An RNA of 207 nucleotides, treated with DMS and 2A3 and read out base by base. The reactions ran in a buffer of 150 mM KOAc, 10 mM MgCl2 and 150 mM bicine (pH 8.5), at 24 C. 2A3 adducts were read by reverse transcription with SuperScript II with manganese. The 2A3 profile rests on 955 reads.

[RMDB]
RNA sequence: GGGAACGACUCGAGUAGAGUCGAAAAGGUAAUGGACGACGGCGGCGUGUGGCGAACAGGGAUACCGGUACUCAGUGUCUGGAACAUCCCAAGGGGCGGCGGAGCUAGCACCCCGACACGUUAAGGCAAAACUUCGCACGGUUCGCCGUGCGAAGAAUCCUUUAGAAAUCUUCGGAUUUCUAAAGGAAAAAGAAACAACAACAACAAC
Reactivity to DMS in 0.01 (KOAc 150mM, MgCl2 10mM, bicine 150mM(pH8.5), 24C), signal-to-noise 1, nucleotides 027 to 156: g050g030u010a100a090u010g010g010a040c020g000a110c050g020g000c080g030g000c040g030u000g060u010g010g010c030g020a070a100c040a130g000g000g010a030u010a180c040c000g030g020u010a000c040u000c260a070g020u000g030u020c030u010g010g020a090a120c100a120u010c010c010c040a070a190g000g010g000g020c060g000g000c000g000g000a080g030c070u000a120g050c060a080c010c000c000c010g000a060c020a060c080g000u060u010a070a110g050g000c050a050a030a080a120c000u000u000c010g020c000a000c000g000g020u000u010c300g010c010c000g000u000g000c000g000a000a020g000a100a040
Reactivity to 2A3 in 0.01 (KOAc 150mM, MgCl2 10mM, bicine 150mM(pH8.5), 24C), signal-to-noise 1, nucleotides 027 to 156: g010g000u040a080a010u110g000g010a000c050g010a000c050g010g040c030g010g030c030g000u040g010u030g020g000c040g020a090a020c060a090g030g000g020a040u090a050c010c050g000g050u060a020c020u030c210a080g050u050g020u190c040u060g000g030a040a050c020a060u020c010c020c030a020a070g040g000g000g000c010g050g000c060g040g030a040g040c030u050a020g040c020a070c020c010c000c000g040a020c010a000c010g050u110u150a090a010g050g000c030a030a020a060a060c000u000u000c000g000c030a000c040g010g020u020u030c090g020c070c000g000u000g000c000g000a000a000g000a000a030